[RMDB]
RNA sequence: GGGAACGACUCGAGUAGAGUCGAAAAUCGUACUACAUUUGACCUCAAUGACAUUGAUAACACCUACAUACUUGAGGGUGAUGUAGAAAUCCUAAUGUCUCCGACAAUGCUAGACGGGGUUACGGAUAUGCCGCAGCCGAGUACGAAUGACAUAAUCUCACUACAUCCAGUUCGCUGGAUGUAGUGAAAAAGAAACAACAACAACAAC
Reactivity to 2A3 in 0.01 (KOAc 150mM, MgCl2 10mM, bicine 150mM(pH8.5), 24C), signal-to-noise 3, nucleotides 027 to 156: u060c020g030u010a040c000u000a000c000a080u030u070u090g300a250c010c020u070c050a100a120u200g080a100c090a120u090u110g000a090u130a180a040c030a090c070c050u170a080c010a070u080a070c020u000u000g020a030g040g000g000u020g010a020u000g000u000a010g020a030a080a000u040c000c000u010a060a010u030g000u030c000u000c020c020g030a040c080a150a040u140g100c040u040a040g050a150c030g000g000g000g000u050u040a010c060g040g000a020u030a040u220g080c000c020g030c020a010g010c020c010g020a010g030u050a020c020g030a080a060u090g030a000c000a080u130a110a190u080c010
Reactivity to DMS in 0.01 (KOAc 150mM, MgCl2 10mM, bicine 150mM(pH8.5), 24C), signal-to-noise 1, nucleotides 027 to 156: u020c020g000u000a080c050u010a030c020a100u000u000u000g010a100c030c000u000c020a070a140u000g000a110c040a110u000u010g110a140u030a100a090c070a080c200c000u000a070c100a120u010a090c030u000u000g000a090g040g050g070u020g000a050u000g070u000a080g000a040a060a100u000c010c110u000a100a100u000g000u000c000u000c050c000g050a290c220a040a130u000g020c010u000a070g020a140c000g020g040g000g000u000u000a130c060g020g030a140u000a120u040g040c050c000g010c070a100g030c000c000g000a040g040u000a130c020g000a050a000u000g000a080c000a060u000a060a250u000c100